RNA sequence: GGGAACGACUCGAGUAGAGUCGAAAAAUGCGCAUCGCUUCACGAAUAGUGUGUGCUGGCAGGCCGGUGAUGCUUUCGACAUACUCCGGCGUGUAUUUGGCAACCAUUGCGCGAUAUUCGUCAAAACCAUAUACCAUGAAUUCGUUCAUGGUAUAUGAAAAGAAACAACAACAACAAC
Reactivity to 2A3 in 0.01 (KOAc 150mM, MgCl2 10mM, bicine 150mM(pH8.5), 24C), signal-to-noise 9, nucleotides 027 to 126: a000u090g000c020g000c020a040u070c080g040c110u160u110c070a030c100g090a140a120u100a230g040u050g010u030g030u030g060c010u010g050g000c010a010g100g010c000c010g010g010u020g010a010u010g010c000u100u190u170c170g100a160c020a030u090a300c010u010c010c000g010g000c050g020u010g000u000a180u040u140u140g030g000c010a030a020c020c030a060u040u100g010c030g000c010g010a020u030a090u130u110c070g060u070c110a040a030a030a050c030
Reactivity to DMS in 0.01 (KOAc 150mM, MgCl2 10mM, bicine 150mM(pH8.5), 24C), signal-to-noise 9, nucleotides 027 to 126: a070u010g010c020g020c080a090u000c110g020c120u010u010c120a070c050g010a080a080u010a080g010u000g010u010g020u000g010c010u000g000g010c020a030g010g020c000c010g010g010u000g000a030u000g000c040u000u010u010c220g010a120c010a020u000a110c020u000c000c020g010g000c000g000u000g010u000a100u000u010u010g010g010c020a070a100c070c050a080u000u000g010c060g010c020g010a110u000a080u000u000c040g010u010c160a060a060a100a110c250

Record summary:
Source: RMDB library OK2TST, as collected in RNAgym. The record gives the reactivity of an RNA of 177 nucleotides to 2A3 and DMS. The RNA was probed in 150 mM KOAc, 10 mM MgCl2 and 150 mM bicine (pH 8.5) at 24 C. Reactivities are given for positions 27 through 126. As a SHAPE reagent, 2A3 marks flexible, mostly unpaired nucleotides at the ribose 2'-OH. For 2A3 the reverse transcriptase was SuperScript II with manganese.